[RMDB]
RNA sequence: GGGAACGACUCGAGUAGAGUCGAAAACGCUUAAAGACACUCACCUCCCGCAAAAACAUCCUCGGGUUGGUCUUUUUGAGGGUUUUGAGCGUCGGAUGGAGCAGGGACUGGAGAUGGUUUGUCACCCAUACAUGAGUAACUUCGGUUACUCAUGUAUAAAAGAAACAACAACAACAAC
Reactivity to 2A3 in 0.01 (KOAc 150mM, MgCl2 10mM, bicine 150mM(pH8.5), 24C), signal-to-noise 9, nucleotides 027 to 126: c010g000c000u020u020a110a020a010g110a010c010a010c030u010c000a030c000c000u010c000c010c000g010c050a060a100a030a030a030c040a100u120c020c060u050c040g010g010g000u070u060g050g020u060c070u110u220u070u070u100g010a020g010g010g000u000u000u020u030g020a010g000c010g010u020c010g030g020a080u100g020g010a030g020c040a050g040g010g020a040c040u050g010g010a060g020a070u060g030g060u040u070u060g070u050c040a050c020c000c000
Reactivity to DMS in 0.01 (KOAc 150mM, MgCl2 10mM, bicine 150mM(pH8.5), 24C), signal-to-noise 9, nucleotides 027 to 126: c050g010c030u010u000a030a080a060g010a020c020a040c010u000c010a100c060c020u000c000c010c010g030c260a040a050a050a070a060c140a080u010c070c060u010c070g010g010g010u020u010g010g000u020c020u000u010u010u020u010g010a030g010g000g010u000u010u000u000g000a030g010c030g010u010c040g000g010a100u010g000g000a050g000c040a060g000g000g000a050c060u000g000g000a070g010a080u020g000g010u000u010u000g010u010c090a110c020c020c080

The record gives the reactivity of an RNA of 177 nucleotides to 2A3 and DMS. It was measured as part of the RMDB libraries RFM100 and RFMREP. Reactivities are given for positions 27 through 126.